Structure probing data (2A3 and DMS) for a 177-nucleotide construct. The data come from the RNA Mapping Database (RMDB), library OK2TST. Conditions: 150 mM KOAc, 10 mM MgCl2 and 150 mM bicine (pH 8.5), 24 C. For DMS the reverse transcriptase was MarathonRT.

RNA sequence: GGGAACGACUCGAGUAGAGUCGAAAACAAAUCUGUCAAAUUUAAGUGACAACCCACGCACAUCACAAUGUCUGGCGAGAAAGGUCUCAAAUCCGCCGAGGUGACCCUCGACGGAAUGAAUUACUACGCUUAUGAAUUAAUUCGUUAAUUCAUAAGCAAAAGAAACAACAACAACAAC
Reactivity to 2A3 in 0.01 (KOAc 150mM, MgCl2 10mM, bicine 150mM(pH8.5), 24C), signal-to-noise 7, nucleotides 027 to 126: c020a000a060a030u080c060u090g020u030c020a050a100a160u190u300u290a220a080g050u040g030a010c020a020a080c000c010c000a010c030g030c010a060c000a040u070c010a010c010a110a080u060g040u030c040u050g030g010c010g000a030g080a050a070a020g060g030u020c010u010c050a110a170a050u010c000c010g000c010c000g010a010g030g010u180g120a100c070c000c000u000c000g010a010c000g000g020a010a020u050g010a010a030u100u090a070c050u030a040c080
Reactivity to DMS in 0.01 (KOAc 150mM, MgCl2 10mM, bicine 150mM(pH8.5), 24C), signal-to-noise 6, nucleotides 027 to 126: c100a100a100a070u010c120u000g010u000c020a030a120a110u010u010u010a090a150g010u010g000a040c020a080a160c070c010c010a080c130g030c050a050c050a080u000c140a060c110a070a070u010g010u000c060u010g010g010c040g010a060g000a050a070a070g010g000u010c050u000c030a040a070a140u000c010c010g010c010c000g020a010g010g010u010g020a090c270c010c000u000c000g010a010c000g000g000a010a050u000g020a070a080u010u000a090c090u010a100c280